[RMDB]
RNA sequence: GGGAACGACUCGAGUAGAGUCGAAAAGAUCGAGUUCGCUCGAUCAAAUCAUUCAAUAUUGCCGGUUUGAACGAAAUUGAUCAGUUCACCGGGAGCAUUGUAUCGAAAAGACAUCGUUCGCGAUGUCCUACUAAACCUGCUUCGGCAGGUUUAGUAGAAAAGAAACAACAACAACAAC
Reactivity to 2A3 in 0.01 (KOAc 150mM, MgCl2 10mM, bicine 150mM(pH8.5), 24C), signal-to-noise 2, nucleotides 027 to 126: g020a000u000c000g010a010g020u130u000c170g040c090u000c010g010a000u010c010a000a010a010u040c010a010u110u080c010a010a010u000a030u050u040g210c000c010g020g050u070u140u220g000a000a000c010g010a050a030a170u260u280g090a170u200c130a080g030u010u020c000a000c000c000g000g010g000a010g000c010a000u030u020g010u070a060u130c140g050a060a040a020a060g010a000c000a000u010c010g070u100u050c160g000c000g130a000u010g010u000c000
Reactivity to DMS in 0.01 (KOAc 150mM, MgCl2 10mM, bicine 150mM(pH8.5), 24C), signal-to-noise 2, nucleotides 027 to 126: g010a000u000c000g010a030g020u000u040c290g030c030u000c000g020a030u030c020a080a100a090u010c050a080u000u000c000a000a000u000a040u000u000g030c000c020g000g000u010u030u000g010a010a000c000g010a060a140a290u000u040g000a070u010c090a150g030u000u000c000a050c000c000g010g020g000a030g010c090a010u020u000g000u000a040u000c120g030a030a050a120a100g000a010c000a010u000c000g010u000u030c200g030c020g010a030u000g000u000c000